The record gives the reactivity of an RNA of 177 nucleotides to 2A3 and DMS. DMS adducts were read by reverse transcription with MarathonRT. The reactions ran in a buffer of 150 mM KOAc, 10 mM MgCl2 and 150 mM bicine (pH 8.5), at 24 C. Values cover nucleotides 27 to 126.
[RMDB]
RNA sequence: GGGAACGACUCGAGUAGAGUCGAAAACAGCUGUGCAUAUCGCGCUGGAUGUGCAGGGCUGGACGCCUCCGGCUGAUCUCGUUGAUCGCAUGCACUGCCGCUCGCGUCGGGUACGGCAAAUCAGUGGAGUGAGCAAAAUGUUCGCAUUUUGCUCACUAAAAGAAACAACAACAACAAC
Reactivity to 2A3 in 0.01 (KOAc 150mM, MgCl2 10mM, bicine 150mM(pH8.5), 24C), signal-to-noise 2, nucleotides 027 to 126: c000a030g000c020u040g020u010g300c000a000u030a020u070c030g060c030g050c160u160g090g040a030u010g020u050g050c030a000g000g070g030c010u010g000g050a020c050g040c010c010u000c010c020g050g020c070u090g020a070u030c050u030c100g090u110u240g030a030u020c040g000c030a030u110g000c060a040c080u040g000c000c010g000c010u050c020g050c030g050u070c050g080g000g010u060a050c030g010g010c000a050a030a050u120c020a010g020u050g100g010
Reactivity to DMS in 0.01 (KOAc 150mM, MgCl2 10mM, bicine 150mM(pH8.5), 24C), signal-to-noise 2, nucleotides 027 to 126: c010a030g000c020u000g010u010g010c020a000u010a050u010c030g030c210g020c100u000g010g010a010u000g050u000g020c000a050g010g010g030c000u010g000g010a040c100g000c040c020u000c080c030g040g000c030u000g000a020u010c040u000c260g030u020u000g000a060u000c050g010c070a090u010g000c080a140c090u010g000c030c000g010c030u000c110g010c070g000u000c080g030g010g000u000a080c090g000g010c030a050a100a080u000c050a030g010u000g010g000